Structure probing data (2A3) for a 207-nucleotide construct. 2A3 adducts were read by reverse transcription with SuperScript II with manganese. Values cover nucleotides 27 to 156. The reactions ran in a buffer of 150 mM KOAc, 10 mM MgCl2 and 150 mM bicine (pH 8.5), at 24 C. It was measured as part of the RMDB library OK3TST.

RNA sequence: GGGAACGACUCGAGUAGAGUCGAAAACUCCAAUCAUAUAGAUAUUUUCUUUCUAUCAUGGAUAAUAUUUGUAAUGGUUCUUUCCGUACAACAUACUGUUUAGAUGAUAUUGCGCAUAAUUUCCGGAGGCAAAUACGAUAGUCUAGAUUGACCGAUGCCACUCUACUCUGUUCGCAGAGUAGAGUGGAAAAGAAACAACAACAACAAC
Reactivity to 2A3 in 0.01 (KOAc 150mM, MgCl2 10mM, bicine 150mM(pH8.5), 24C), signal-to-noise 1, nucleotides 027 to 156: c020u000c010c020a000a130u020c000a020u000a000u030a030g020a030u020a140u090u040u080u000c020u100u120u000c040u160a220u120c050a130u060g010g000a030u030a090a010u020a070u030u040u000g030u030a080a130u020g020g050u070u060c030u100u140u040c060c030g070u190a030c000a120a040c040a080u090a090c000u000g060u160u070u090a030g030a050u040g030a040u030a090u190u100g040c040g000c090a010u030a130a120u130u020u090c000c010g000g020a030g000g000c020a000a140a000u060a080c020g040a060u130a010g010u000c000u000a010g000a130u000u170g020a020c000c000g120a030u180g000